Structure probing data (2A3 and DMS) for a 177-nucleotide construct. Conditions: 150 mM KOAc, 10 mM MgCl2 and 150 mM bicine (pH 8.5), 24 C. It was measured as part of the RMDB library OK2TRN.

[RMDB]
RNA sequence: GGGAACGACUCGAGUAGAGUCGAAAACGGCGUUGGCGCGAUGCUAAGCGUGCAUGAAGAACCCUUCCGCAUCAAUAAGCUCAACACCAUCCCCAUUCGGGCUGGAAUGACUAUCAGUAACGAGCCGUGGUGAUCAAGAUUUCGAUCUUGAUCACCAAAAAGAAACAACAACAACAAC
Reactivity to 2A3 in 0.01 (KOAc 150mM, MgCl2 10mM, bicine 150mM(pH8.5), 24C), signal-to-noise 2, nucleotides 027 to 126: c030g000g010c040g050u010u030g020g000c030g000c070g080a010u050g010c010u050a030a000g020c040g120u060g040c070a120u290g170a150a110g090a100a050c070c000c000u020u000c050c030g000c020a000u000c030a010a120u140a240a070g030c030u060c180a010a020c010a040c000c000a000u040c000c000c000c000a010u000u100c070g060g010g020c010u010g000g070a120a010u040g090a060c030u170a170u280c050a050g100u140a120a060c110g020a070g000c030c010g050
Reactivity to DMS in 0.01 (KOAc 150mM, MgCl2 10mM, bicine 150mM(pH8.5), 24C), signal-to-noise 2, nucleotides 027 to 126: c170g000g040c000g020u000u000g010g010c030g010c150g000a070u000g050c020u000a070a060g030c210g000u010g000c060a110u030g030a130a190g000a100a060c040c040c030u010u010c110c180g030c030a020u000c020a100a130u010a110a120g010c020u000c040a070a040c040a040c010c030a170u000c010c010c000c030a140u000u000c060g000g000g000c010u000g010g000a090a030u000g000a080c120u000a120u000c060a070g000u020a090a060c040g000a030g030c010c030g000
Values cover nucleotides 27 to 126.